[RMDB]
RNA sequence: GGGAACGACUCGAGUAGAGUCGAAAAAGCGCUUUCGAGCGCUGAUCCAGGGGUCGAGUGUCUUCGAGGCUUUUGACGAGCUGAAGCCUCCACGGCUCGAUAAGCUCCCCACCGAAGACCUCGACGGAGGCACCCUACCCUUCAACUUCGGUUGAAACAUCUAUGUAUACUUCGGUAUACAUAGAUGAAAAGAAACAACAACAACAAC
Reactivity to DMS in 0.01 (KOAc 150mM, MgCl2 10mM, bicine 150mM(pH8.5), 24C), signal-to-noise 4, nucleotides 027 to 156: a030g010c040g030c000u000u000u010c260g030a040g020c000g040c010u000g000a060u000c040c020a120g000g000g030g010u000c010g020a040g020u010g010u010c010u000u000c020g000a190g030g000c040u000u000u010u010g020a250c130g020a030g040c020u000g010a040a100g020c000c010u000c020c040a300c070g020g000c010u020c010g000a160u010a050a090g010c020u000c300c070c030c060a300c100c010g000a040a040g000a030c010c010u000c010g000a040c040g010g010a030g040g010c010a070c030c020c020u000a060c020c010c010u000u000c010a010a040c010u010u000c180g020g010u000u010g000a050a110a230
Reactivity to 2A3 in 0.01 (KOAc 150mM, MgCl2 10mM, bicine 150mM(pH8.5), 24C), signal-to-noise 6, nucleotides 027 to 156: a010g020c030g000c040u120u090u210c280g070a020g000c010g000c010u010g010a030u060c040c020a040g070g010g020g010u010c000g000a010g000u190g000u000c000u000u010c020g070a130g140g000c040u050u070u120u200g220a130c050g000a010g000c000u020g020a070a010g010c010c000u000c010c000a020c020g000g000c010u000c010g040a100u040a130a020g010c020u130c050c070c020c020a060c070c010g000a000a000g000a010c010c000u000c000g000a000c000g000g000a000g000g000c010a040c000c000c010u120a140c020c010c000u020u030c010a020a020c010u040u060c170g120g000u020u020g000a010a040a040

Source information
An RNA of 207 nucleotides, treated with DMS and 2A3 and read out base by base. For DMS, 11,362 sequencing reads were counted. The reactions ran in a buffer of 150 mM KOAc, 10 mM MgCl2 and 150 mM bicine (pH 8.5), at 24 C. For DMS the reverse transcriptase was MarathonRT. Values cover nucleotides 27 to 156.